Source: RMDB library M2RFPK, as collected in RNAgym. This 207-nucleotide RNA was probed chemically with 2A3 and DMS. The reactions ran in a buffer of 150 mM KOAc, 10 mM MgCl2 and 150 mM bicine (pH 8.5), at 24 C.

[RMDB]
RNA sequence: GGGAACGACUCGAGUAGAGUCGAAAACGGCAAAAAAGCAAACUUGACCACCAAGGAUAAAAGAGAUGUUAUCCAAGGAUGCAAAAGAUAAUCUCACUUUUGACACCCACUGAUCUCGAACUUAAAGAAAACCGAGACUACUUCGGUAGUCUCGGAAGACCUUUCUUUAGUUCGCUAAAGAAAGGUCAAAAGAAACAACAACAACAAC
Reactivity to 2A3 in 0.01 (KOAc 150mM, MgCl2 10mM, bicine 150mM(pH8.5), 24C), signal-to-noise 4, nucleotides 027 to 156: c020g040g000c040a000a010a030a030a060a090g110c080a150a100a070c040u050u040g050a110c020c010a010c020c030a050a050g020g000a030u060a090a110a020a000g070a010g010a020u100g010u090u050a020u040c050c030a020a030g040g010a050u060g010c010a000a000a040a040g020a050u090a150a190u130c030u040c080a060c020u050u040u010u030g060a060c000a020c030c020c000a010c050u070g060a080u020c040u020c020g040a100a080c030u100u110a110a060a090g040a040a090a040a040c010c000g000a000g000a000c000u000a000c000u020u050c120g080g000u000a000g010u000c000u000c010g000g000a010a000
Reactivity to DMS in 0.01 (KOAc 150mM, MgCl2 10mM, bicine 150mM(pH8.5), 24C), signal-to-noise 1, nucleotides 027 to 156: c060g000g000c050a010a040a090a070a070a040g000c050a060a040a160c050u000u010g000a130c060c010a060c020c010a060a300g000g000a060u000a020a030a120a130g010a180g020a210u000g000u000u000a080u000c040c100a040a300g030g010a100u000g000c030a040a030a020a030g000a170u000a050a120u000c070u000c000a100c010u000u010u000u020g010a220c020a050c040c030c020a300c040u010g040a060u000c010u000c040g000a050a050c060u000u000a040a050a160g010a080a040a050a250c010c000g010a000g010a030c000u000a000c010u000u000c300g080g010u000a010g000u000c010u000c000g000g000a010a020